This 177-nucleotide RNA was probed chemically with 2A3 and DMS. For 2A3, 5,558 sequencing reads were counted. The DMS profile rests on 2,919 reads. For DMS the reverse transcriptase was MarathonRT. The RNA was probed in 150 mM KOAc, 10 mM MgCl2 and 150 mM bicine (pH 8.5) at 24 C.
[RMDB]
RNA sequence: GGGAACGACUCGAGUAGAGUCGAAAAAAAAAGGACCUACAGCCGAGCGAGUGACUGAAAACCGCAAAGUCACGAAGCAUCGUUAUACCUAAAUGGUCGUAGCGAAAUAAGAGUUGUUCCCAGUAAAGAUACCAAGUAUGUUCGCAUACUUGGUAUCAAAAGAAACAACAACAACAAC
Reactivity to 2A3 in 0.01 (KOAc 150mM, MgCl2 10mM, bicine 150mM(pH8.5), 24C), signal-to-noise 3, nucleotides 027 to 126: a000a000a000a000a000g130g010a010c000c000u000a000c010a030g110c050c060g090a020g010c020g020a040g050u010g010a000c010u020g050a050a080a120a140c070c050g020c150a170a080a000g000u000c010a010c010g000a070a010g000c010a040u020c000g000u000u020a010u010a010c010c020u110a230a220a170u260g030g000u040c100g010u020a000g000c000g050a050a060a120u140a150a060g000a010g010u010u010g010u010u000c000c000c000a000g000u020a000a010a010
Reactivity to DMS in 0.01 (KOAc 150mM, MgCl2 10mM, bicine 150mM(pH8.5), 24C), signal-to-noise 3, nucleotides 027 to 126: a050a080a100a170a070g000g000a020c010c000u000a000c010a230g020c210c120g020a130g000c020g000a300g010u000g000a010c010u010g000a070a040a080a070c120c210g000c130a030a080a010g000u000c000a000c000g000a070a120g010c020a120u000c020g020u000u000a020u000a020c000c000u000a050a090a050u010g000g000u000c110g020u000a000g000c010g020a030a050a080u000a100a120g000a000g010u000u000g000u000u000c010c000c000a080g000u000a020a070a070